[RMDB]
RNA sequence: GGGAACGACUCGAGUAGAGUCGAAAAUUUUGGGCAGAUAACAACUGUUACGCGUCUUGCCACUGUAUUGUAAACACUACAACAAAUUUUAAGUUUAAUAGACCUACGCGACAAGAUGAAUCGGAAACAAAUAAAUAUCGUUCGCGAUAUUUAUUUGAAAAGAAACAACAACAACAAC
Reactivity to DMS in 0.01 (KOAc 150mM, MgCl2 10mM, bicine 150mM(pH8.5), 24C), signal-to-noise 7, nucleotides 027 to 126: u000u000u010u000g020g010g020c030a020g010a090u000a060a090c150a100a100c050u000g000u000u000a090c100g010c080g000u000c010u000u000g010c030c010a090c060u000g010u000a060u000u000g000u000a060a080a110c160a070c100u000a050c070a040a100c080a060a080a120u010u010u010u000a060a120g000u010u010u010a060a080u010a130g010a070c080c100u000a030c050g010c030g010a030c030a040a040g000a060u000g010a070a090u010c060g000g000a110a090a140
Reactivity to 2A3 in 0.01 (KOAc 150mM, MgCl2 10mM, bicine 150mM(pH8.5), 24C), signal-to-noise 5, nucleotides 027 to 126: u110u100u070u080g010g010g000c010a010g020a050u060a130a030c040a090a070c030u040g050u040u070a090c080g010c010g010u010c020u050u040g000c010c010a030c050u030g040u040a060u100u040g030u030a000a080a030c050a040c130u080a020c020a080a010c030a020a160a070u120u220u100u160a110a050g010u060u020u050a150a090u090a070g030a020c000c010u010a010c040g000c020g020a030c010a020a010g020a070u100g010a030a090u100c030g020g040a030a080a040